[RMDB]
RNA sequence: GGGAACGACUCGAGUAGAGUCGAAAACAAGAUGGACACUUCUGGGCACUUCCAUGACUCGGGGGUGGGGGACUUGGAUGAAGACCCCAAGUGCCCCUGUCCAUCCUCUGGGGAUGAGCAGCAGCAGCAGCAGCAGCAGCAACAGCAGCAGCAGCCAGGCUAUUAACUAAUUCGUUAGUUAAUAGCCAAAAGAAACAACAACAACAAC
Reactivity to 2A3 in 0.01 (KOAc 150mM, MgCl2 10mM, bicine 150mM(pH8.5), 24C), signal-to-noise 1, nucleotides 027 to 156: c020a000a030g010a030u010g010g000a000c020a000c040u160u090c070u120g010g010g060c030a040c050u170u040c080c020a140u080g090a190c060u020c130g000g000g000g000g000u050g000g000g000g000g040a010c020u040u000g020g010a100u100g160a100a040g070a060c000c020c040c010a030a010g010u100g150c000c000c000c000u040g000u050c000c000a000u010c010c000u030c010u020g000g010g000g010a020u050g020a020g060c060a010g000c020a000g020c010a000g000c000a000g020c000a000g000c010a030g000c010a010g000c010a010a010c040a110g020c010a020g040c000a000g010c010a000g040c010c030a020